[RMDB]
RNA sequence: GGGAACGACUCGAGUAGAGUCGAAAAGGCCUGGAGUUCGCGGAAGACGUCGCCGGCCUCGGCGGUGCUCACGGGGCGAAGCUGCGGCGCGGUGCGCGGCGCGGUCAUGGGCGUACUCAUCGGCUGCUCUCCUCCUUGCGGGGUGUGCUCCGGAAUGGUCCGUAUUGGAAUUCGUUCCAAUACGGACAAAAGAAACAACAACAACAAC
Reactivity to 2A3 in 0.01 (KOAc 150mM, MgCl2 10mM, bicine 150mM(pH8.5), 24C), signal-to-noise 1, nucleotides 027 to 156: g100g030c000c030u040g000g050a100g020u080u060c000g000c010g030g100a160a090g110a110c010g030u040c020g030c010c000g010g010c000c010u010c000g010g030c000g000g050u190g060c030u090c040a170c110g070g040g000g050c010g030a030a030g000c020u050g020c010g030g000c120g000c010g130g030u010g010c030g000c000g000g000c010g000c010g040g000u040c020a140u060g020g070g000c020g030u060a100c000u010c010a100u110c010g050g000c100u040g000c020u000c050u030c010c000u000c020c000u130u200g030c260g000g000g000g000u050g010u000g050c000u000c000c000g050g050a130a120u240g060
The record gives the reactivity of an RNA of 207 nucleotides to 2A3. The RNA was probed in 150 mM KOAc, 10 mM MgCl2 and 150 mM bicine (pH 8.5) at 24 C. For 2A3, 820 sequencing reads were counted. Source: RMDB library OK3TST, as collected in RNAgym.